[RMDB]
RNA sequence: GGGAACGACUCGAGUAGAGUCGAAAAUAAGUUUGAGGAACACUAGGCGUUGUCUAGACGAGGCAAGCUCUGGAAAGCAACGCCGAGUCUCUGAGAAGAGGGAGCAUGGGGUGUGCUGAUUUAAAAACAAUAGCGUUUAGUUCGCUAAACGCUAUUGAAAAGAAACAACAACAACAAC
Reactivity to 2A3 in 0.01 (KOAc 150mM, MgCl2 10mM, bicine 150mM(pH8.5), 24C), signal-to-noise 9, nucleotides 027 to 126: u170a040a020g110u050u090u130g060a040g000g040a100a030c020a010c090u040a040g000g000c010g000u000u020g050u070c030u030a020g020a090c030g030a020g030g060c160a130a150g120c030u010c030u060g050g050a110a030a000g010c000a000a000c000g000c000c000g000a000g000u000c000u000c010u020g070a060g010a100a030g010a040g010g030g020a060g020c080a100u090g030g010g000g020u070g010u020g030c040u020g050a170u040u110u230a080a110a010a010a000
Reactivity to DMS in 0.01 (KOAc 150mM, MgCl2 10mM, bicine 150mM(pH8.5), 24C), signal-to-noise 9, nucleotides 027 to 126: u030a090a090g020u010u010u010g010a200g000g000a080a050c180a050c020u000a140g010g000c000g010u000u000g000u040c020u010a050g020a300c160g000a050g000g010c240a130a160g010c020u010c000u030g000g010a180a140a040g010c000a010a010c020g000c000c000g010a040g000u000c050u000c020u000g000a170g000a090a030g010a030g000g000g000a060g010c090a080u020g000g010g010g010u010g010u000g000c050u000g010a080u010u010u020a030a050a070a080a120
Annotation
Structure probing data (2A3 and DMS) for a 177-nucleotide construct. Values are in units of 0.01, from 0 to 300, in steps of 10. The reactions ran in a buffer of 150 mM KOAc, 10 mM MgCl2 and 150 mM bicine (pH 8.5), at 24 C. DMS adducts were read by reverse transcription with MarathonRT. It was measured as part of the RMDB libraries RFM100 and RFMREP.